RNA sequence: GGGAACGACUCGAGUAGAGUCGAAAAGAUAUGGAUAGUUUCAGCUUUUGACGCUCGAUGUGUCGGAAACGACACUAGAGCGAUAAGCUGAACUAUCCUAAGUCAAACUUGUGCUUCGGCACAAGAAGACCUUUAGCACGUUCGCGUGCUAAAGGUCAAAAGAAACAACAACAACAAC
Reactivity to 2A3 in 0.01 (KOAc 150mM, MgCl2 10mM, bicine 150mM(pH8.5), 24C), signal-to-noise 1, nucleotides 027 to 126: g000a000u090a000u140g000g000a010u000a000g050u090u080u250c010a000g000c040u060u090u090u190g240a120c030g030c000u000c000g030a080u300g010u010g000u010c000g020g000a110a090a090c000g010a000c000a000c000u000a020g000a010g000c010g000a010u000a020a000g010c000u000g010a000a000c000u000a000u000c000c000u010a040a000g020u010c020a020a030a150c000u000u000g010u000g020c000u040u100c300g230g020c000a000c030a020a010g010a000a030
Reactivity to DMS in 0.01 (KOAc 150mM, MgCl2 10mM, bicine 150mM(pH8.5), 24C), signal-to-noise 2, nucleotides 027 to 126: g000a050u000a300u000g010g000a030u000a000g000u030u000u000c000a010g010c020u000u000u000u000g020a300c080g040c000u000c000g010a180u000g000u000g040u000c000g030g020a080a090a300c010g010a000c020a000c020u000a190g000a020g010c000g000a040u000a010a040g000c000u010g010a000a010c000u000a000u000c010c000u000a020a040g020u000c020a140a120a220c000u000u000g000u000g000c000u000u020c270g010g030c000a000c000a000a000g000a150a180